[RMDB]
RNA sequence: GGGAACGACUCGAGUAGAGUCGAAAAUUGAUACAUUCCUAAGUCAAUUCCCUGUGAAGGAGUUUGAAGAUGAGAGUGAAUAUUACUGGGAUGUAAUAGGUUCAAGCAAGAAGAAUAUUCCUCUUGAUAAAUGCUGAGUAUUCGUACUCAGCAUUUAAAAAGAAACAACAACAACAAC
Reactivity to DMS in 0.01 (KOAc 150mM, MgCl2 10mM, bicine 150mM(pH8.5), 24C), signal-to-noise 6, nucleotides 027 to 126: u010u010g010a090u000a180c110a100u010u000c010c010u000a130a280g000u000c010a020a070u000u000c010c000c010u010g020u010g010a140a080g000g000a080g010u000u000u010g010a070a110g010a120u000g000a060g000a050g010u000g010a040a040u000a010u000u000a060c030u000g010g000g010a070u000g010u000a060a110u010a070g010g010u000u000c060a050a110g010c120a050a080g000a100a050g010a060a050u000a050u000u000c020c050u000c000u000u000g000a170
Reactivity to 2A3 in 0.01 (KOAc 150mM, MgCl2 10mM, bicine 150mM(pH8.5), 24C), signal-to-noise 2, nucleotides 027 to 126: u060u070g010a030u040a110c030a080u010u080c010c010u050a150a000g030u000c000a000a020u010u000c020c010c050u000g050u040g100a070a020g030g080a050g000u080u210u230g100a080a050g030a070u300g010a020g020a020g020u170g020a040a020u040a010u100u050a120c050u060g060g090g040a040u020g060u150a060a130u080a150g120g110u090u090c070a070a040g060c040a010a030g140a070a000g040a100a010u020a010u040u020c030c010u020c030u020u050g020a020
Chemical mapping of a 177-nucleotide RNA with DMS and 2A3.
It was measured as part of the RMDB library OK2TST.
The DMS profile rests on 6,527 reads.
DMS adducts were read by reverse transcription with MarathonRT.
The 2A3 profile rests on 1,289 reads.
Values are in units of 0.01, from 0 to 300, in steps of 10.
The RNA was probed in 150 mM KOAc, 10 mM MgCl2 and 150 mM bicine (pH 8.5) at 24 C.